[RMDB]
RNA sequence: GGGAACGACUCGAGUAGAGUCGAAAACAGAUGCCGUUCGCGGCAUCUGAAAGUGACGGUGAAAAAUGGCGAAGGUGCCAGCUACCACCGACACAGGGCGCAAAAGAGGAUUCUUCGGAAUCCUCAACCCUAUAGUUUACUUCGGUAAACUAUAGGGAAAAGAAACAACAACAACAAC
Reactivity to DMS in 0.01 (KOAc 150mM, MgCl2 10mM, bicine 150mM(pH8.5), 24C), signal-to-noise 5, nucleotides 027 to 126: c020a000g000a020u000g010c010c000g020u000u020c210g040c010g020g000c000a000u000c000u010g000a020a070a090g020u000g000a120c020g010g010u000g000a020a020a080a180a110u000g000g000c010g000a150a160g030g020u020g010c000c000a020g000c140u010a180c160c000a010c010c000g010a080c020a020c030a140g010g000g000c120g030c180a070a040a100a070g010a010g010g000a020u000u000c000u000u010c190g010g010a010a000u000c000c000u000c000a010a050
Reactivity to 2A3 in 0.01 (KOAc 150mM, MgCl2 10mM, bicine 150mM(pH8.5), 24C), signal-to-noise 3, nucleotides 027 to 126: c010a000g010a000u010g000c010c000g030u070u070c250g020c020g110g000c000a000u010c000u010g010a030a020a000g000u010g020a010c000g020g010u020g030a070a010a030a030a030u020g000g000c040g110a300a190g260g160u300g040c010c000a000g000c000u030a040c030c010a000c000c000g000a000c000a000c000a000g080g080g030c110g010c080a020a070a070a060g000a000g000g010a010u010u000c000u030u100c230g070g000a020a000u000c000c000u000c000a000a000